[RMDB]
RNA sequence: GGGAACGACUCGAGUAGAGUCGAAAAAAGAUAUGGAGGCAAGGGAGCUCUAAGUACAGCAUCGAUCUAAGCUCGGAAACGAGCUUAGGGAGCUGGAACUGAGCGAAGAACUUGCCUCCUAAGUCAAGAAACAAUUAGUGUUCGCACUAAUUGUUUCAAAAGAAACAACAACAACAAC
Reactivity to 2A3 in 0.01 (KOAc 150mM, MgCl2 10mM, bicine 150mM(pH8.5), 24C), signal-to-noise 3, nucleotides 027 to 126: a000a030g060a020u070a060u110g000g010a010g000g020c010a000a000g010g010g010a030g030c000u010c000u030a030a010g000u010a010c000a000g010c030a170u300c080g050a010u050c040u000a000a000g000c010u000c000g000g010a040a060a050c010g000a010g000c000u000u000a000g010g000g000a010g000c000u010g000g000a010a020c010u030g010a010g000c040g060a300a000g000a010a000c000u010u000g000c010c000u000c000c000u000a000a000g000u000c010a000a090
Reactivity to DMS in 0.01 (KOAc 150mM, MgCl2 10mM, bicine 150mM(pH8.5), 24C), signal-to-noise 4, nucleotides 027 to 126: a160a060g010a030u010a300u010g000g000a010g000g010c010a010a000g000g010g000a070g010c010u000c000u000a020a050g010u000a150c020a010g010c010a300u000c180g000a060u010c000u000a010a010g010c000u000c000g020g010a100a100a180c000g010a020g000c000u000u000a000g020g000g000a020g030c010u000g000g000a110a090c260u000g000a010g000c000g000a060a100g020a110a180c000u000u000g010c010c010u000c000c000u000a010a060g010u000c030a130a170
The record gives the reactivity of an RNA of 177 nucleotides to 2A3 and DMS. The 2A3 profile rests on 11,914 reads. For DMS, 5,974 sequencing reads were counted. It was measured as part of the RMDB library TTRDES. DMS (dimethyl sulfate) methylates the pairing face of unpaired adenines and cytosines. The RNA was probed in 150 mM KOAc, 10 mM MgCl2 and 150 mM bicine (pH 8.5) at 24 C. As a SHAPE reagent, 2A3 marks flexible, mostly unpaired nucleotides at the ribose 2'-OH. For 2A3 the reverse transcriptase was SuperScript II with manganese.